Source: RMDB library OK2TST, as collected in RNAgym.
Chemical mapping of a 177-nucleotide RNA with 2A3 and DMS.
RNA sequence: GGGAACGACUCGAGUAGAGUCGAAAAAUCAUUCAUUUGACAAGACUUGAACAAACUAGCUUAUGUGUCAGCCAAUGCGUGAGACAUGGUGGGUGAUGCCAAGAGAAGUCCAGUCCCUGCCCUUGGGCUCUACGGGGACAUUCGUGUCCCCGUAGAGAAAAGAAACAACAACAACAAC
Reactivity to 2A3 in 0.01 (KOAc 150mM, MgCl2 10mM, bicine 150mM(pH8.5), 24C), signal-to-noise 2, nucleotides 027 to 126: a000u060c040a010u100u030c030a070u080u020u180g090a060c070a020a080g040a060c010u070u080g060a140a030c040a080a100a020c050u070a030g050c020u130u010a040u240g070u000g050u030c020a000g030c010c050a140a110u210g020c070g050u090g040a030g000a040c040a050u050g010g040u050g010g010g050u030g000a040u080g000c000c020a080a030g070a000g040a110a010g040u030c010c000a010g000u000c000c000c020u040g020c020c000c000u030u050g010g000g060
Reactivity to DMS in 0.01 (KOAc 150mM, MgCl2 10mM, bicine 150mM(pH8.5), 24C), signal-to-noise 3, nucleotides 027 to 126: a060u000c050a040u010u000c110a070u000u000u000g010a060c090a080a140g010a070c040u000u000g020a060a080c100a060a090a080c090u010a080g020c060u000u000a070u000g000u000g020u000c040a150g020c030c100a090a080u000g000c040g020u000g000a090g010a070c040a010u000g010g020u010g020g000g010u000g000a070u000g040c070c030a040a030g000a070g020a070a110g000u000c040c060a060g000u000c030c020c020u010g000c040c010c030u000u010g000g000g020